[RMDB]
RNA sequence: GGGAACGACUCGAGUAGAGUCGAAAAAAGUCAGGAUGCCAAUGAACUAUUGGGUUGUAAUUCAAGUGUAUGUGAACUAUUGGUUAAGGCAGACAAUCUUUAUGCUAAUUAUGUGGAUAAGGCAUUACACAACCAGGAAGUUCGCUUCCUGGUUGUGAAAAGAAACAACAACAACAAC
Reactivity to DMS in 0.01 (KOAc 150mM, MgCl2 10mM, bicine 150mM(pH8.5), 24C), signal-to-noise 3, nucleotides 027 to 126: a040a010g000u000c070a050g000g000a110u010g020c030c030a060a090u000g030a070a070c040u010a070u000u000g020g000g010u010u010g020u010a100a070u000u000c070a100a090g010u000g010u000a050u010g000u000g010a060a030c090u000a100u000u000g000g010u010u000a070a100g010g020c040a020g030a090c130a070a070u000c090u000u000u000a010u020g000c050u000a050a090u010u000a080u010g020u010g000g010a070u000a050a110g000g010c080a030u010u000a170
Reactivity to 2A3 in 0.01 (KOAc 150mM, MgCl2 10mM, bicine 150mM(pH8.5), 24C), signal-to-noise 1, nucleotides 027 to 126: a000a000g130u070c060a030g000g060a030u070g010c000c010a030a050u140g080a110a060c030u040a140u010u040g170g020g010u180u210g070u050a080a170u170u000c130a110a000g140u020g010u230a080u110g040u020g050a000a200c060u070a080u040u110g000g050u020u010a060a000g000g000c000a000g040a060c060a070a020u000c010u000u150u190a000u160g030c040u050a130a150u150u160a130u150g150u130g050g070a030u010a120a050g050g000c000a000u000u060a000